[RMDB]
RNA sequence: GGGAACGACUCGAGUAGAGUCGAAAACCUCGAAGUUCGCUUCGAGGAAAAAGCGUACUACGAAUCUUUUGACGUCUCCCUACCCACCGACUCCCAAAUAGGAGUCGAGGGAGACGAUAAGAUUCGUAUCGCAAAAACCUCGUGUUCGCACGAGGAACGUUUUCCAAAGUUUCGACUUUGGAAAACGAAAAGAAACAACAACAACAAC
Reactivity to 2A3 in 0.01 (KOAc 150mM, MgCl2 10mM, bicine 150mM(pH8.5), 24C), signal-to-noise 2, nucleotides 027 to 156: c000c000u010c000g000a040a000g020u060u090c250g040c110u000u000c010g000a010g000g020a110a050a000a000a010g020c040g030u040a070c090u000a000c000g000a000a000u000c000u110u040u030u160g250a130c060g000u000c010u020c010c010c000u070a190c080c080c070a080c070c060g000a010c000u010c000c040c030a240a300a090u210a190g000g000a010g000u000c000g000a000g000g000g000a000g000a000c000g000a000u000a000a000g000a010u000u000c000g000u000a010u040c010g000c000a180a080a000a000a050c000c010u000c000g000u010g120u150u180c300g020c080a000c000g000a000g030g010a000a030